[RMDB]
Overview:
Structure probing data (DMS and 2A3) for a 177-nucleotide construct. Source: RMDB library RFM100, as collected in RNAgym. The DMS profile rests on 2,178 reads. For 2A3 the reverse transcriptase was SuperScript II with manganese.
RNA sequence: GGGAACGACUCGAGUAGAGUCGAAAAAUAACGAUGUCGACGCCGGGCUGGAUGUCCGGGUUGCCGGCCUUGCCGAUGGCGGCGAUGCGGCCGUUCUUGAGCGCGAGGUCGGCCUUGACGAUGCCCCCCAAUUAAGCCGGUUCGCCGGCUUAAUUGGAAAAGAAACAACAACAACAAC
Reactivity to DMS in 0.01 (KOAc 150mM, MgCl2 10mM, bicine 150mM(pH8.5), 24C), signal-to-noise 1, nucleotides 027 to 126: a030u010a080a150c080g000a090u000g040u000c010g000a050c230g020c000c000g010g000g000c010u040g020g000a070u020g040u000c010c010g020g000g020u060u040g000c000c000g010g010c000c000u010u020g000c000c010g010a180u000g000g010c030g000g000c000g010a150u050g060c300g030g070c010c010g020u000u050c040u000u030g010a300g020c130g000c000g000a000g000g020u000c000g000g030c020c000u000u000g000a020c010g040a070u000g010c010c000c000c170
Reactivity to 2A3 in 0.01 (KOAc 150mM, MgCl2 10mM, bicine 150mM(pH8.5), 24C), signal-to-noise 3, nucleotides 027 to 126: a000u200a060a010c130g070a060u210g020u020c000g050a030c040g060c140c010g000g000g020c050u150g300g090a150u180g060u000c000c010g010g010g020u060u080g010c000c000g000g000c000c000u000u030g020c000c000g090a060u060g000g000c010g000g020c010g090a110u230g070c080g090g000c000c010g020u130u170c000u090u110g070a020g000c100g000c030g110a010g000g000u000c030g000g000c000c010u040u080g000a000c020g030a000u060g030c000c000c000c020